[RMDB]
RNA sequence: GGGAACGACUCGAGUAGAGUCGAAAACAAAACGCAGCAGUAUGACUGCAAAUGGUACAUUCCGCUCACGGAUCUCAGCUUCCAGAUGGUGGAUGAACUGGAGGCAGUGCCCAACAUCCCCCUGGUGAAGGAUAGGCACUUUCGAGUGCCUAUCCUUAAAAGAAACAACAACAACAAC
Reactivity to DMS in 0.01 (KOAc 150mM, MgCl2 10mM, bicine 150mM(pH8.5), 24C), signal-to-noise 1, nucleotides 027 to 126: c020a130a040a270a060c240g000c070a010g010c040a160g020u040a070u000g000a160c010u020g000c030a040a050a100u000g010g040u000a040c070a080u000u000c040c060g000c120u010c110a140c150g000g040a030u000c090u020c140a180g000c010u000u000c030c030a030g000a030u000g000g000u070g010g000a060u000g020a140a050c000u020g010g000a100g000g020c040a070g000u000g000c010c000c050a180a090c060a100u000c010c000c000c000c020u000g000g050u000g000